[RMDB]
RNA sequence: GGGAACGACUCGAGUAGAGUCGAAAACUGCCGCCGGGACGGAGUGAUCCUCGCAGGGUCGCACGGUCGCCUCGGGUCGGCCUCGUGUCGGCUCGACCUGCGAGGGGAGCGAGUGGCGAGCCCGACCAAAACUUUCUCGCCUUCGGGCGAGAAAGAACUCACUGUCGUGGUUCGCCACGACAGUGAGAAAAGAAACAACAACAACAAC
Reactivity to 2A3 in 0.01 (KOAc 150mM, MgCl2 10mM, bicine 150mM(pH8.5), 24C), signal-to-noise 1, nucleotides 027 to 156: c040u040g090c030c020g060c020c020g000g100g070a030c040g030g030a050g080u050g030a030u070c000c000u010c000g000c030a000g110g000g000u230c070g070c080a160c110g190g060u180c050g010c030c000u010c010g030g000g010u040c000g000g020c000c020u050c080g230u300g020u020c000g000g010c000u020c000g030a100c010c000u000g010c000g000a010g000g000g000g000a050g000c050g000a000g000u030g030g000c000g010a010g050c030c000c010g010a010c000c020a040a060a010a140c000u010u010u010c000u000c000g020c000c000u010u020c140g060g000g020c020g000a000g000a000a000a000g000a000a000